[RMDB]
RNA sequence: GGGAACGACUCGAGUAGAGUCGAAAAGAAUGUGUGUAAACCGUGUGGCACACAAUGGCUAUUCAGGAAUCGUUCUGAGGCAACAGGUAAAAUGGAAGAAAGCCAAAUCCUUAGCAUACGGAAGAAAACGAUUUACCUCAUUCGUGAGGUAAAUCGUAAAAGAAACAACAACAACAAC
Reactivity to DMS in 0.01 (KOAc 150mM, MgCl2 10mM, bicine 150mM(pH8.5), 24C), signal-to-noise 2, nucleotides 027 to 126: g000a210a040u010g010u000g000u000g000u000a090a140a100c010c020g000u040g000u000g010g000c000a010c020a000c020a030a170u000g020g000c000u010a130u010u000c000a060g010g000a170a050u020c050g020u010u000c010u030g000a080g020g000c160a040a100c080a070g000g060u080a030a040a060a130u090g030g020a100a120g000a040a120a080g000c000c000a000a080a060u000c010c030u000u040a090g010c000a030u000a010c020g000g000a300a150g010a020a030a080
Reactivity to 2A3 in 0.01 (KOAc 150mM, MgCl2 10mM, bicine 150mM(pH8.5), 24C), signal-to-noise 4, nucleotides 027 to 126: g160a050a050u090g000u000g000u000g010u030a070a020a080c000c000g000u000g020u000g010g010c000a000c000a000c000a000a040u030g010g000c000u100a240u140u030c040a040g050g130a020a070u050c020g100u100u020c010u020g140a100g170g000c050a060a040c010a070g000g070u100a050a090a100a100u110g070g030a060a040g050a130a120a000g010c000c000a020a040a020u060c010c000u010u080a030g030c000a010u000a010c000g060g040a050a030g040a030a090a010